[RMDB]
RNA sequence: GGGAACGACUCGAGUAGAGUCGAAAAUCGCGACGCUGAGCUCGGACACAGCUAGUAAAUGUAGCCUAACCUACUUAAUGGGUCGCAGCCCCCCGGGGUCGUCGCAUGUCCAACGUGCUCGACUGGACGUACGUCCGUAGUUCGCUACGGACGUACGAAAAGAAACAACAACAACAAC
Reactivity to DMS in 0.01 (KOAc 150mM, MgCl2 10mM, bicine 150mM(pH8.5), 24C), signal-to-noise 2, nucleotides 027 to 126: u010c060g010c000g010a040c000g040c070u000g040a080g010c020u020c230g000g030a090c060a110c300a140g000c010u000a070g020u000a030a120a090u020g020u000a030g010c010c050u030a050a180c110c000u000a020c030u010u010a080a150u010g000g000g010u000c000g020c030a200g010c020c000c000c010c030c070g030g010g010g020u000c020g000u010c230g010c040a020u000g010u010c090c160a080a120c010g030u000g000c050u000c070g000a030c030u000g000g020a260
Reactivity to 2A3 in 0.01 (KOAc 150mM, MgCl2 10mM, bicine 150mM(pH8.5), 24C), signal-to-noise 1, nucleotides 027 to 126: u110c020g020c010g000a020c070g000c190u010g020a020g080c050u060c100g050g100a060c040a000c000a090g000c030u050a010g050u150a060a150a240u220g030u060a000g000c000c000u030a040a070c010c010u020a020c020u110u120a120a060u230g070g000g000u010c010g020c060a070g000c010c020c010c010c000c000g040g090g010g040u020c020g000u050c080g040c000a020u020g000u030c080c000a020a020c040g000u020g000c000u010c000g020a010c020u030g070g030a010